[RMDB]
RNA sequence: GGGAACGACUCGAGUAGAGUCGAAAAUGAAGCUCCAAUGUGGUGGAAUUCCGGUGACUUGAUUACACGCUCGCAUUCAUGGUCACUUCCGAAGCGCUUUAGUGCCUUCCGUCCCCAAACCGCCAACAAACCCUCCGUUUUUCGAAACGGAGGGUUUAAAAGAAACAACAACAACAAC
Reactivity to DMS in 0.01 (KOAc 150mM, MgCl2 10mM, bicine 150mM(pH8.5), 24C), signal-to-noise 2, nucleotides 027 to 126: u030g000a120a070g000c020u000c040c040a040a020u030g000u000g000g010u000g000g000a060a090u030u030c010c090g010g010u000g000a060c070u030u040g010a060u000u020a020c060a120c100g000c020u040c090g040c060a050u000u020c030a050u020g000g020u000c010a020c020u020u000c080c060g040a080a160g020c070g000c030u010u000u010a020g030u030g000c020c020u000u000c040c030g010u020c000c030c030c090a030a050a120c020c030g000c000c080a040a120c280
Reactivity to 2A3 in 0.01 (KOAc 150mM, MgCl2 10mM, bicine 150mM(pH8.5), 24C), signal-to-noise 2, nucleotides 027 to 126: u140g020a050a020g030c010u030c000c020a030a070u080g000u040g060g000u020g020g000a030a100u070u000c040c030g050g000u030g030a070c000u060u040g040a020u090u080a050c070a020c070g070c020u020c030g020c020a030u050u060c030a070u070g080g000u070c000a000c060u010u000c040c020g040a080a000g040c000g000c050u080u130u100a080g060u020g020c000c000u030u030c020c010g030u000c000c000c000c000a000a020a020c020c010g000c000c020a020a020c030